[RMDB]
RNA sequence: GGGAACGACUCGAGUAGAGUCGAAAAUCUAUGGUCUUCGGACCAUAGAAAAUAAGAUUCGGAAGCAUGAGAACCGAGACAAACAUGCAAACGCGAAAGCGAAAACAAUCCAGUUCGCUGGAUUGAAGGCAAUAUGAUACUUCGGUAUCAUAUUGCCAAAAGAAACAACAACAACAAC
Reactivity to DMS in 0.01 (KOAc 150mM, MgCl2 10mM, bicine 150mM(pH8.5), 24C), signal-to-noise 2, nucleotides 027 to 126: u000c000u000a000u010g030g000u000c040u000u000c200g050g000a000c000c000a000u000a000g000a000a010a120a050u000a000a080g000a280u000u000c020g030g000a230a070g000c010a000u000g010a190g000a070a000c010c020g000a090g020a130c300a010a000a050c010a040u010g040c010a140a140a190c060g010c020g000a120a080a200g010c000g000a130a070a100a220c020a000a030u000c030c000a000g020u000u010c180g010c000u000g010g010a040u010u000g000a130a060
Reactivity to 2A3 in 0.01 (KOAc 150mM, MgCl2 10mM, bicine 150mM(pH8.5), 24C), signal-to-noise 1, nucleotides 027 to 126: u000c010u000a000u010g020g010u000c010u050u050c280g040g000a010c000c000a000u000a000g000a000a000a000a000u130a010a020g080a080u000u120c000g000g000a050a040g010c000a010u010g010a040g040a090a020c000c020g010a050g020a100c150a040a030a000c000a000u020g000c000a050a050a090c050g000c020g040a090a030a000g000c000g080a050a000a030a050c010a000a000u000c000c000a000g010u040u070c150g090c080u000g000g000a010u010u000g000a050a020

The data come from the RNA Mapping Database (RMDB), library M2PK50. An RNA of 177 nucleotides, treated with DMS and 2A3 and read out base by base. The reactions ran in a buffer of 150 mM KOAc, 10 mM MgCl2 and 150 mM bicine (pH 8.5), at 24 C. For 2A3, 2,405 sequencing reads were counted. Reactivities are given for positions 27 through 126.